[RMDB]
RNA sequence: GGGAACGACUCGAGUAGAGUCGAAAAAGUCGUACGAGCAGCGUAACGAUAUCUCACAUGCUGGAAAGGUGAUCUGUAUCUCCGACGUCACUCGCGGUAGCGGUAUCACCCAUCGUGUCGGUAAGCGUCUGCCCUCAAAUUUCGAUUUGAGGGCAGAAAAAGAAACAACAACAACAAC
Reactivity to DMS in 0.01 (KOAc 150mM, MgCl2 10mM, bicine 150mM(pH8.5), 24C), signal-to-noise 2, nucleotides 027 to 126: a060g020u000c010g080u000a040c030g020a190g010c150a050g020c030g000u000a080a070c030g000a040u000a120u020c060u000c010a150c130a100u000g000c060u000g020g030a080a140a110g000g030u000g000a030u000c030u000g000u010a090u000c080u010c030c000g000a050c080g010u010c170a130c160u000c080g010c110g000g010u020a120g000c030g000g010u000a030u000c040a070c010c000c010a060u000c080g040u000g000u010c030g010g000u010a070a100g000c170g000
Reactivity to 2A3 in 0.01 (KOAc 150mM, MgCl2 10mM, bicine 150mM(pH8.5), 24C), signal-to-noise 2, nucleotides 027 to 126: a000g020u030c010g000u020a020c040g030a060g180c090a020g110c030g020u020a170a050c040g000a030u030a130u200c020u020c040a060c040a030u130g060c010u050g050g030a120a070a030g000g000u000g000a010u000c000u030g040u110a110u030c110u000c010c040g150a170c000g110u110c050a100c130u110c100g000c000g010g060u050a030g060c000g000g030u080a020u050c020a030c000c000c010a050u070c030g060u020g040u020c050g000g050u070a100a000g060c000g040
The record gives the reactivity of an RNA of 177 nucleotides to DMS and 2A3. For 2A3 the reverse transcriptase was SuperScript II with manganese. The 2A3 profile rests on 1,630 reads. The data come from the RNA Mapping Database (RMDB), library OK2TST. DMS adducts were read by reverse transcription with MarathonRT. The RNA was probed in 150 mM KOAc, 10 mM MgCl2 and 150 mM bicine (pH 8.5) at 24 C. For DMS, 1,454 sequencing reads were counted.